[RMDB]
RNA sequence: GGGAACGACUCGAGUAGAGUCGAAAAGAUAUGGAGUGGACCCAGGUGCCCAUGCGUUGAAAUCGGAAACGAUGGAGCAUGUGCACCUGCCACUCCUAAGUCAAAGAAAGCGCUUCGGCGCUUUCAACAUAUUAUUUGUGUUCGCACAAAUAAUAUGAAAAGAAACAACAACAACAAC
Reactivity to DMS in 0.01 (KOAc 150mM, MgCl2 10mM, bicine 150mM(pH8.5), 24C), signal-to-noise 9, nucleotides 027 to 126: g010a050u010a300u010g000g000a010g010u000g000g000a300c220c300c090a010g000g010u000g010c010c040c000a010u000g000c000g000u000u010g000a070a160a020u000c000g000g000a130a090a180c010g000a020u000g000g010a090g010c000a000u000g000u000g000c000a000c000c000u000g000c000c000a000c010u000c000c000u000a010a050g010u000c050a100a110a160g000a010a020a010g010c000g030c000u000u010c210g020g010c000g010c000u000u000u000c000a090a200
Reactivity to 2A3 in 0.01 (KOAc 150mM, MgCl2 10mM, bicine 150mM(pH8.5), 24C), signal-to-noise 4, nucleotides 027 to 126: g030a020u080a050u150g000g000a000g010u010g010g020a050c110c130c050a010g040g000u000g000c050c050c000a000u010g000c010g280u300u070g020a030a020a000u010c010g010g040a100a040a030c010g000a010u010g000g020a010g000c010a000u000g000u010g010c000a000c000c000u000g000c000c000a000c000u000c000c000u000a010a010g010u020c020a000a060a190g000a010a000a000g000c010g010c060u100u190c300g170g000c000g000c000u020u060u000c000a000a000
Source: RMDB library TTRDEL, as collected in RNAgym. Chemical mapping of a 177-nucleotide RNA with DMS and 2A3. The reactions ran in a buffer of 150 mM KOAc, 10 mM MgCl2 and 150 mM bicine (pH 8.5), at 24 C. The DMS profile rests on 17,349 reads.